[RMDB]
RNA sequence: GGGAACGACUCGAGUAGAGUCGAAAAUUAGGUGUAUGCCUGUUUAAAAGGACAUAUGAGCAUAACAUCAUUAACCUUGGUGAUCUGAUAGAAGAAGUAGCGAGGAUGAUUAUUAUAGAUCACAUAACACAGUACCCAACUUCGGUUGGGUACUGUGAAAAGAAACAACAACAACAAC
Reactivity to DMS in 0.01 (KOAc 150mM, MgCl2 10mM, bicine 150mM(pH8.5), 24C), signal-to-noise 1, nucleotides 027 to 126: u000u000a090g010g000u000g010u000a050u000g010c020c010u000g010u010u000u000a060a120a180a220g050g020a060c060a090u010a100u000g010a150g040c000a010u000a040a030c030a010u000c040a110u000u030a150a160c050c010u000u010g010g000u000g000a050u000c000u000g030a060u000a070g000a130a100g000a050a050g040u000a020g000c020g010a090g010g020a030u000g000a180u000u010a010u000u000a120u000a060g010a020u010c000a000c010a080u000a070a200
Reactivity to 2A3 in 0.01 (KOAc 150mM, MgCl2 10mM, bicine 150mM(pH8.5), 24C), signal-to-noise 1, nucleotides 027 to 126: u060u020a040g050g000u000g000u010a000u030g000c000c020u000g020u020u100u050a160a110a020a070g160g010a030c020a020u260a080u170g090a130g000c000a000u050a160a070c000a020u080c020a010u030u110a050a040c020c010u000u050g210g000u050g000a010u000c030u040g010a040u080a160g080a050a030g030a050a020g080u080a050g050c050g080a020g000g080a090u080g040a040u050u150a000u010u100a080u100a070g000a000u040c030a000c020a010u060a130a020
An RNA of 177 nucleotides, treated with DMS and 2A3 and read out base by base. For DMS the reverse transcriptase was MarathonRT. The DMS profile rests on 810 reads. The 2A3 profile rests on 784 reads. The data come from the RNA Mapping Database (RMDB), library OK2TRN.